[RMDB]
RNA sequence: GGGAACGACUCGAGUAGAGUCGAAAAGAUAUGGAUGAUAGGGAGUCCCUCAUCGGAAACGAUGACGGGACAUCGAUCUAUAUCCUAAGUCAAAACCUGUAUACAUCGUUCGCGAUGUAUACAGGAACUGGACAUUAGAGUUCGCUCUAAUGUCCAGAAAAGAAACAACAACAACAAC
Reactivity to 2A3 in 0.01 (KOAc 150mM, MgCl2 10mM, bicine 150mM(pH8.5), 24C), signal-to-noise 3, nucleotides 027 to 126: g020a000u070a020u120g010g000a020u160g070a010u160a070g100g020g000a040g010u010c000c000c000u000c000a000u000c000g000g000a050a060a000c010g010a010u000g020a020c160g000g030g000a000c000a030u030c000g020a020u020c000u010a010u000a010u020c000c000u050a140a060g070u060c030a020a010a070a190c000c000u000g000u000a000u000a000c000a000u000c000g060u060u090c300g030c000g090a000u000g010u000a010u000a000c000a000g000g000a000a010
Reactivity to DMS in 0.01 (KOAc 150mM, MgCl2 10mM, bicine 150mM(pH8.5), 24C), signal-to-noise 2, nucleotides 027 to 126: g000a030u000a210u000g000g000a000u020g010a090u000a070g010g030g000a080g000u000c000c000c000u010c000a010u000c010g010g000a080a060a130c000g000a000u000g000a030c220g050g000g000a000c000a030u000c070g010a060u010c010u000a010u000a040u000c000c000u000a050a140g010u010c050a070a040a080a120c000c000u000g010u000a010u000a000c000a000u000c000g030u000u020c210g040c010g010a000u000g000u000a000u000a000c000a010g010g000a010a020

Description:
An RNA of 177 nucleotides, treated with 2A3 and DMS and read out base by base. Conditions: 150 mM KOAc, 10 mM MgCl2 and 150 mM bicine (pH 8.5), 24 C. It was measured as part of the RMDB library TTRDEL. For 2A3, 6,865 sequencing reads were counted. DMS adducts were read by reverse transcription with MarathonRT.